[RMDB]
The data come from the RNA Mapping Database (RMDB), libraries RFM100 and RFMREP. Structure probing data (DMS and 2A3) for a 177-nucleotide construct. Conditions: 150 mM KOAc, 10 mM MgCl2 and 150 mM bicine (pH 8.5), 24 C.
RNA sequence: GGGAACGACUCGAGUAGAGUCGAAAAUAGAGGUGUGACGGCGUGCCUUUUGUAGAAUGAGCCAGCGAGUUGCUGGCCGUCGGCGAGGUUAAGCUGGAAAGCGAGCCGGAGCGAAAGCGAGUCCGAAGAUAUGACUCUUAUUCGUAAGAGUCAUAUCAAAAGAAACAACAACAACAAC
Reactivity to DMS in 0.01 (KOAc 150mM, MgCl2 10mM, bicine 150mM(pH8.5), 24C), signal-to-noise 9, nucleotides 027 to 126: u030a070g010a090g010g020u010g020u010g010a180c040g010g000c030g010u010g000c020c010u000u000u020u020g030u020a080g010a060a050u010g010a170g020c000c000a010g000c010g010a180g020u030u030g010c000u000g000g010c000c010g010u000c010g010g030c040g000a060g010g010u000u010a050a200g010c010u000g010g040a080a110a040g000c020g000a100g010c010c010g000g000a180g000c030g000a060a080a100g010c050g000a110g010u010c010c030g010a130a130
Reactivity to 2A3 in 0.01 (KOAc 150mM, MgCl2 10mM, bicine 150mM(pH8.5), 24C), signal-to-noise 9, nucleotides 027 to 126: u190a010g070a040g030g050u070g020u040g060a020c020g000g020c020g010u050g020c010c000u050u090u050u130g090u050a070g030a190a120u080g010a050g030c000c000a000g000c020g060a230g250u200u300g090c000u000g000g000c000c000g010u000c010g010g030c020g010a020g020g000u050u050a060a020g000c000u020g080g050a110a060a000g010c010g000a010g010c010c010g010g020a020g010c030g050a080a030a000g050c030g020a020g050u010c020c020g030a050a010